Background: An RNA of 177 nucleotides, treated with DMS and 2A3 and read out base by base. For DMS, 2,979 sequencing reads were counted. For 2A3 the reverse transcriptase was SuperScript II with manganese.
RNA sequence: GGGAACGACUCGAGUAGAGUCGAAAAGAUAUGGAAUCACGCGAUGCGCUCCGUUGAAAUCGGAAACGAUGGAGGAGCGAACUACAUCCCGUGAUUCCUAAGUCAAACUCUAGGUUCGCCUAGAGAACAGCUAGUAUUUCUUCGGAAAUACUAGCUGAAAAGAAACAACAACAACAAC
Reactivity to DMS in 0.01 (KOAc 150mM, MgCl2 10mM, bicine 150mM(pH8.5), 24C), signal-to-noise 3, nucleotides 027 to 126: g000a040u000a250u000g000g020a020a020u000c000a010c000g030c300g000a010u000g000c010g010c000u010c000c010g020u010u020g000a060a070a020u000c000g000g000a070a010a060c000g030a000u000g010g040a120g000g010a020g010c000g000a000a030c110u020a300c010a010u000c010c060c000g010u000g000a020u000u000c000c010u000a010a060g010u000c020a080a080a140c000u000c000u000a000g000g010u000u020c260g000c000c010u010a000g010a000g010a130a130
Reactivity to 2A3 in 0.01 (KOAc 150mM, MgCl2 10mM, bicine 150mM(pH8.5), 24C), signal-to-noise 2, nucleotides 027 to 126: g020a010u050a030u130g010g000a000a000u010c000a000c000g010c000g000a000u000g010c020g000c000u000c000c000g110u160u120g100a190a220a040u010c010g000g050a060a030a030c000g000a000u030g060g030a060g000g000a000g000c010g000a020a000c000u120a030c000a020u010c040c030c020g000u010g000a000u000u000c000c000u010a010a010g000u000c000a010a070a160c000u010c000u010a020g020g080u020u070c300g070c050c000u000a010g010a000g000a030a030